[RMDB]
RNA sequence: GGGAACGACUCGAGUAGAGUCGAAAAGAGCUCUAGAUGCGAUUGUAGACUGUUACAGCAUCUGCUAUCAGUCUGAGAUUGCUCAGGAUAGCUGGAGCAAUCUGCAACGGUGCAGACUCCAGUGACACCGUGAACAAUCGUUCAUGUCACAGAGCAGCACCGUGAGGGAUUUCGAUCCCUCACGGUGAAAAGAAACAACAACAACAAC
Reactivity to 2A3 in 0.01 (KOAc 150mM, MgCl2 10mM, bicine 150mM(pH8.5), 24C), signal-to-noise 4, nucleotides 027 to 156: g050a000g000c010u010c020u040a050g010a070u080g010c030g060a030u030u080g050u020a020g000a010c020u030g070u140u210a100c090a110g050c050a190u150c210u270g000c010u020a060u040c010a000g000u000c010u020g010a020g010a080u020u040g000c000u000c020a000g030g050a120u080a070g060c020u020g000g040a000g020c080a050a060u000c000u030g010c030a100a090c140g190g030u090g000c000a020g010a140c010u060c020c000a020g020u020g050a020c010a000c020c030g100u070g030a010a020c010a010a000u010c020g020u080u130c060a040u100g060u070c020a030c040a140g010a010g010c020a000g050
Reactivity to DMS in 0.01 (KOAc 150mM, MgCl2 10mM, bicine 150mM(pH8.5), 24C), signal-to-noise 2, nucleotides 027 to 156: g000a150g020c000u000c000u000a100g000a200u010g040c010g020a060u000u000g000u010a040g040a080c000u010g030u000u000a070c050a060g000c120a250u000c120u000g000c020u000a040u000c000a040g020u000c030u000g000a070g000a030u000u000g040c010u000c010a170g010g020a150u000a240g020c010u000g070g010a030g010c000a020a060u000c000u000g030c020a050a070c140g020g020u000g010c010a030g010a190c000u000c010c020a040g040u000g030a130c080a040c030c050g020u030g040a020a020c000a090a060u000c030g040u000u000c020a090u000g040u000c040a100c100a110g030a030g000c020a100g020